[RMDB]
RNA sequence: GGGAACGACUCGAGUAGAGUCGAAAAGAGAAGUAAACUGUUAGUCGCCAGAGGCUUGACCCGCUGUGGCCGCGGCGGCCUAGUUGAGACUGAAACGGCGGGUGAGAGCUCGGAGAGACCGAGCAGAACUAGCCUAGGAUUUCGAUCCUAGGCUAGUAAAAGAAACAACAACAACAAC
Reactivity to DMS in 0.01 (KOAc 150mM, MgCl2 10mM, bicine 150mM(pH8.5), 24C), signal-to-noise 6, nucleotides 027 to 126: g000a120g010a100a110g010u020a090a110a120c070u010g010u000u030a120g000u000c010g020c000c020a040g010a120g000g020c010u000u010g000a080c000c020c000g020c010u000g020u000g020g010c000c000g020c300g000g000c030g020g000c030c040u040a060g000u000u010g000a120g000a220c050u000g010a060a040a020c000g000g020c000g010g010g010u000g000a120g010a070g000c000u000c000g010g010a220g010a190g020a140c020c010g010a010g010c000a070g000a110
Reactivity to 2A3 in 0.01 (KOAc 150mM, MgCl2 10mM, bicine 150mM(pH8.5), 24C), signal-to-noise 6, nucleotides 027 to 126: g130a000g030a100a060g070u210a110a100a050c050u070g080u200u130a020g010u020c000g000c000c010a080g060a100g190g000c000u040u060g090a230c000c000c000g000c010u010g000u030g010g000c000c010g020c030g030g010c000g000g000c010c000u050a040g020u030u110g040a040g030a070c040u070g000a050a040a000c010g000g000c000g000g030g000u010g040a110g000a000g000c000u000c000g020g000a180g000a000g030a090c000c010g010a000g000c010a000g010a010
Source: RMDB library OK1LIB, as collected in RNAgym. An RNA of 177 nucleotides, treated with DMS and 2A3 and read out base by base. For DMS, 12,759 sequencing reads were counted. For 2A3, 5,803 sequencing reads were counted. For 2A3 the reverse transcriptase was SuperScript II with manganese. Values cover nucleotides 27 to 126.